RNA sequence: GGGAACGACUCGAGUAGAGUCGAAAAUCCUAAGUCUGUAUGAGUAAUCCAAUGAUGCGCUUUGUCAGUCGGAAACGACUUGGAUUUAAGCGUUGAGGAUUACACAUACAGAUAUGGAAAAUCUUCCGUCAGUCCGUUCGCGGACUGACGGAAGAAACCAAUAUUGGUUCUUCGGAACCAAUAUUGGAAAAGAAACAACAACAACAAC
Reactivity to 2A3 in 0.01 (KOAc 150mM, MgCl2 10mM, bicine 150mM(pH8.5), 24C), signal-to-noise 2, nucleotides 027 to 156: u000c010c000u050a090a020g040u030c000u000g000u000a000u010g050a050g060u000a010a010u000c010c020a110a300u110g010a030u100g040c000g000c000u000u020u020g010u050c020a000g000u000c000g000g100a170a110a080c020g000a000c000u070u140g200g010a010u110u220u130a000a000g000c000g010u000u030g000a000g000g000a000u000u000a020c010a000c010a000u000a000c010a000g000a000u010a030u010g010g020a010a120a070a180u000c000u040u000c010c020g000u010c010a000g020u000c040c040g090u110u170c290g040c040g200g000a000c040u000g000a000c000g070g000a000a000g000a000a000a000
Record summary: Conditions: 150 mM KOAc, 10 mM MgCl2 and 150 mM bicine (pH 8.5), 24 C. This 207-nucleotide RNA was probed chemically with 2A3.